Chemical mapping of a 177-nucleotide RNA with DMS and 2A3. It was measured as part of the RMDB library M2PK90. 2A3 adducts were read by reverse transcription with SuperScript II with manganese. The DMS profile rests on 20,354 reads. Values cover nucleotides 27 to 126. Conditions: 150 mM KOAc, 10 mM MgCl2 and 150 mM bicine (pH 8.5), 24 C. For 2A3, 7,223 sequencing reads were counted. For DMS the reverse transcriptase was MarathonRT.
RNA sequence: GGGAACGACUCGAGUAGAGUCGAAAAGGGGUUAGCCUUUGCAAAACGCUGUUAUUGCAAUGAUCUGGAUUUAGCGCAAGUAGGUCCGAAAUCCAGAUCAACAUUUCGGACCUCCGCGCUAAUAAAACUAUAUAGACGUAUUCGUACGUCUAUAUAGAAAAGAAACAACAACAACAAC
Reactivity to DMS in 0.01 (KOAc 150mM, MgCl2 10mM, bicine 150mM(pH8.5), 24C), signal-to-noise 9, nucleotides 027 to 126: g010g010g010g010u010u010a070g010c100c020u010u000u000g010c060a030a030a060a060c070g010c120u000g020u000u000a090u000u000g010c030a030a050u010g010a110u000c050u000g010g000a160u000u000u000a010g010c010g010c010a070a100g030u010a020g010g000u000c000c000g000a010a000a010u000c140c130a140g000a110u010c170a050a060c180a050u000u000u000c000g010g000a020c000c000u000c080c130g010c010g010c000u000a010a010u000a050a060a070a160
Reactivity to 2A3 in 0.01 (KOAc 150mM, MgCl2 10mM, bicine 150mM(pH8.5), 24C), signal-to-noise 5, nucleotides 027 to 126: g030g020g000g010u070u080a030g080c010c000u050u020u060g000c010a030a020a020a010c090g120c300u150g060u170u060a280u120u070g000c010a020a050u120g040a170u110c070u100g120g020a080u010u030u040a020g000c000g000c000a040a120g040u120a010g100g010u000c000c000g000a010a000a010u030c090c030a040g030a090u050c000a000a000c000a010u010u010u000c010g000g010a000c000c000u000c020c040g000c000g000c000u000a000a010u010a010a030a000a010
Overview: As a SHAPE reagent, 2A3 marks flexible, mostly unpaired nucleotides at the ribose 2'-OH.